[RMDB]
RNA sequence: GGGAACGACUCGAGUAGAGUCGAAAAUUACAUAAGUCUAACACCUUGUUUCGGACUAACAAGGGCGUAUGGAGGAUGGCCGUACCUCCAUAGUUAGACGUCCGAGAACCAGCCGAAAUGAAAAAGAGCUAAUACCUGAUUUCGAUCAGGUAUUAGCAAAAGAAACAACAACAACAAC
Reactivity to DMS in 0.01 (KOAc 150mM, MgCl2 10mM, bicine 150mM(pH8.5), 24C), signal-to-noise 4, nucleotides 027 to 126: u000u040a060c120a130u020a070a110g000u000c010u000a050a030c030a190c050c040u000u010g010u000u020u010c050g000g000a110c100u010a050a070c000a020a030g010g000g000c170g000u010a000u000g000g000a020g000g020a160u030g010g020c020c020g000u010a300c010c000u000c000c000a000u000a020g010u010u010a040g000a100c000g030u000c060c000g020a150g000a080a140c070c090a070g000c000c000g000a050a060a050u020g010a050a050a020a090a060g010a240
Reactivity to 2A3 in 0.01 (KOAc 150mM, MgCl2 10mM, bicine 150mM(pH8.5), 24C), signal-to-noise 6, nucleotides 027 to 126: u150u090a070c060a070u150a170a030g040u000c010u000a010a020c040a050c030c000u010u010g030u020u030u070c130g120g070a110c080u030a030a020c010a010a020g010g020g020c050g100u060a000u000g000g000a000g020g000a030u080g080g020c020c030g020u040a070c010c000u000c000c000a000u000a010g010u000u020a040g000a030c020g000u000c020c010g090a070g020a100a050c030c020a020g040c020c020g050a080a070a050u120g090a070a040a030a030a030g100a000

Chemical mapping of a 177-nucleotide RNA with DMS and 2A3. The 2A3 profile rests on 9,384 reads. The data come from the RNA Mapping Database (RMDB), library OK1LIB. The DMS profile rests on 6,885 reads.